RNA sequence: GGGAACGACUCGAGUAGAGUCGAAAAGGCCACCCAAAGAGAAAGCUUUAGGUAAGAUUGGAAUGGUGAAAAGAGUCAGUAGUUGAGAGGGGGGCCAUUCUGAGAGCUGGGAAAAUCUGGGUUUAGGACUCUUUAGCUUGUUCGCAAGCUAAAGAGUAAAAGAAACAACAACAACAAC
Reactivity to DMS in 0.01 (KOAc 150mM, MgCl2 10mM, bicine 150mM(pH8.5), 24C), signal-to-noise 1, nucleotides 027 to 126: g030g000c020c080a110c030c010c010a070a050a120g000a130g020a120a140a090g010c010u000u010u010a030g020g010u040a060a090g010a150u000u010g000g000a030a060u000g000g040u010g010a050a030a080a080g010a110g000u000c020a040g010u000a050g010u000u000g020a090g010a130g020g000g000g010g030g030c000c010a000u000u000c040u000g000a070g040a070g000c040u000g010g000g010a080a050a030a060u030c100u000g010g000g030u000u000u010a050g040g000

The record gives the reactivity of an RNA of 177 nucleotides to DMS.
Conditions: 150 mM KOAc, 10 mM MgCl2 and 150 mM bicine (pH 8.5), 24 C.